Source: RMDB library OK1LIB, as collected in RNAgym. This 177-nucleotide RNA was probed chemically with 2A3 and DMS. The reactions ran in a buffer of 150 mM KOAc, 10 mM MgCl2 and 150 mM bicine (pH 8.5), at 24 C. The DMS profile rests on 1,913 reads.
RNA sequence: GGGAACGACUCGAGUAGAGUCGAAAACGCUUUGUGGAGGCCAGCAAGGAUCUGAAGGGUCCGGAGAACAUAGCCCUCUACGGUGACAUCCGGCAGCUGGUCACCUAUGUAAAGGGCGCCCAUGGCGGCCCGACCAUGGGUUCGCCCAUGGUCGGGCAAAAGAAACAACAACAACAAC
Reactivity to 2A3 in 0.01 (KOAc 150mM, MgCl2 10mM, bicine 150mM(pH8.5), 24C), signal-to-noise 3, nucleotides 027 to 126: c030g010c020u080u080u110g060u170g020g000a040g000g040c030c000a000g000c040a070a080g030g050a080u040c050u230g170a070a170g090g010g000u010c000c000g080g000a010g000a050a010c050a130u130a050g050c010c000c000u020c020u050a040c060g010g010u080g040a060c040a130u080c030c010g030g010c060a040g000c020u050g030g000u020c000a040c000c000u070a090u180g110u090a100a100a050g020g000g020c010g020c010c010c000a020u050g020g050c000g000
Reactivity to DMS in 0.01 (KOAc 150mM, MgCl2 10mM, bicine 150mM(pH8.5), 24C), signal-to-noise 1, nucleotides 027 to 126: c020g010c030u000u020u000g020u000g000g040a120g020g030c000c020a040g000c000a110a170g000g000a000u010c060u010g020a140a190g000g000g030u000c020c010g000g020a040g000a050a080c150a080u000a080g000c080c030c010u000c070u040a140c080g010g000u010g000a070c070a150u000c040c010g000g000c030a300g040c030u020g000g030u000c000a030c000c030u010a090u000g000u000a040a080a020g000g020g000c000g000c060c050c020a110u030g000g000c070g050